[RMDB]
RNA sequence: GGGAACGACUCGAGUAGAGUCGAAAAGAAAGAUAAGGGAGGCUCCUGGAGAACGGUUGGUCAUCUGUUAAGGAUGGCAGCAUCUGUAGAGAUGUGGGCUCCUACCGCUGGGGGCUUUUUCAUAUAAGUAUUAUUAGCAUUUCGAUGCUAAUAAUACAAAAGAAACAACAACAACAAC
Reactivity to 2A3 in 0.01 (KOAc 150mM, MgCl2 10mM, bicine 150mM(pH8.5), 24C), signal-to-noise 3, nucleotides 027 to 126: g040a030a070a010g080a050u160a090a120g030g020g000a010g030g000c000u000c020c010u030g010g010a050g030a090a030c000g010g010u040u040g050g010u030c020a010u000c020u050g090u240u290a120a050g040g000a000u010g020g010c000a000g000c000a010u000c000u050g210u240a080g040a010g010a210u010g010u040g010g160g000c030u040c000c000u000a010c000c010g020c010u000g000g000g020g010g000c000u040u020u000u020u020c020a020u090a020u020a140a070
Reactivity to DMS in 0.01 (KOAc 150mM, MgCl2 10mM, bicine 150mM(pH8.5), 24C), signal-to-noise 6, nucleotides 027 to 126: g010a130a120a110g000a090u010a090a080g010g000g010a030g010g010c010u000c000c000u000g010g000a050g000a160a240c030g000g010u000u010g010g010u000c010a010u000c010u000g010u030u050a130a170g000g000a010u000g000g010c010a120g000c010a000u000c000u000g010u050a100g020a020g000a010u000g000u010g000g000g000c160u020c010c010u000a020c010c020g000c020u000g000g010g000g000g000c010u000u000u000u000u000c010a060u020a050u010a100a190

Chemical mapping of a 177-nucleotide RNA with 2A3 and DMS. DMS adducts were read by reverse transcription with MarathonRT. Conditions: 150 mM KOAc, 10 mM MgCl2 and 150 mM bicine (pH 8.5), 24 C. It was measured as part of the RMDB libraries RFM100 and RFMREP. For 2A3 the reverse transcriptase was SuperScript II with manganese. Reactivities are rounded to 0.1 and cut off at 0 and 3.